Chemical mapping of a 177-nucleotide RNA with 2A3 and DMS. It was measured as part of the RMDB library TTRDES. Reactivities are given for positions 27 through 126. For DMS, 5,289 sequencing reads were counted.

RNA sequence: GGGAACGACUCGAGUAGAGUCGAAAAGAUAUGGACAGCUUCAGGCUUGGACCGACCUCGUCGGAAACGACGAAGUCGCUAGCCUGAGCUGUCCUAAGUCAAACCAUUGGCCUUCGGGCCAAUGGAAGGUAUGCACUAUGUUCGCAUAGUGCAUACCAAAAGAAACAACAACAACAAC
Reactivity to 2A3 in 0.01 (KOAc 150mM, MgCl2 10mM, bicine 150mM(pH8.5), 24C), signal-to-noise 5, nucleotides 027 to 126: g020a020u060a050u130g000g000a010c000a010g020c040u300u210c030a010g200g000c050u240u290g070g140a130c080c060g000a000c000c010u010c010g000u000c010g020g050a100a040a050c010g000a010c010g000a010a000g000u020c000g030c080u090a020g000c000c000u010g000a000g000c000u000g000u000c000c000u000a000a010g010u010c010a010a030a120c000c000a000u000u000g010g000c000c020u060u080c300g110g000g000c020c000a000a000u000g000g000a000a020
Reactivity to DMS in 0.01 (KOAc 150mM, MgCl2 10mM, bicine 150mM(pH8.5), 24C), signal-to-noise 4, nucleotides 027 to 126: g000a070u000a300u000g000g000a010c010a020g000c000u030u000c030a020g000g000c010u000u020g010g010a170c300c010g000a010c010c040u000c000g050u000c000g000g000a040a100a180c000g020a030c000g020a020a010g010u000c000g020c050u000a010g010c000c000u000g000a030g010c000u000g010u010c000c000u010a010a050g000u010c040a150a140a280c000c010a020u000u000g010g000c000c000u000u020c290g030g010g010c000c000a000a010u000g010g020a030a020

Description: The RNA was probed in 150 mM KOAc, 10 mM MgCl2 and 150 mM bicine (pH 8.5) at 24 C.